Structure probing data (2A3 and DMS) for a 177-nucleotide construct. It was measured as part of the RMDB library OK2TST. 2A3 adducts were read by reverse transcription with SuperScript II with manganese.
RNA sequence: GGGAACGACUCGAGUAGAGUCGAAAAUCUGGAAGCUUUCCAGGAUCGGCAUGGUGUCAGUCAUGUCCUCUACGCCCAGUAGCAGGACGGUCGGGUCUUUUGGAACAGACGCCAGGGAUACGGUCAGAACUUUUGUAGUUUUCGAACUACAAAAGUUAAAAGAAACAACAACAACAAC
Reactivity to 2A3 in 0.01 (KOAc 150mM, MgCl2 10mM, bicine 150mM(pH8.5), 24C), signal-to-noise 5, nucleotides 027 to 126: u050c000u010g000g020a060a040g290c070u120u140u000c000c000a020g050g000a030u030c020g050g030c050a030u040g030g000u040g030u050c030a040g040u050c030a090u150g000u000c020c000u000c000u010a000c010g020c010c020c000a000g000u010a000g010c150a010g000g000a010c020g020g030u060c050g060g020g040u050c000u050u250u160u190g090g010a070a020c010a060g040a030c040g000c000c000a020g040g070g010a070u120a160c020g000g040u020c050a040g060
Reactivity to DMS in 0.01 (KOAc 150mM, MgCl2 10mM, bicine 150mM(pH8.5), 24C), signal-to-noise 8, nucleotides 027 to 126: u000c010u000g010g010a060a150g010c190u000u000u010c000c000a030g010g000a030u000c030g010g010c040a080u000g000g010u000g010u000c030a090g010u000c070a090u010g010u000c000c010u000c010u000a010c010g010c010c010c010a300g000u000a010g000c180a010g010g000a020c010g010g010u000c070g010g010g010u000c030u000u000u000u010g020g010a080a070c080a120g010a040c110g010c010c000a020g000g010g010a100u000a060c040g020g000u000c030a180g010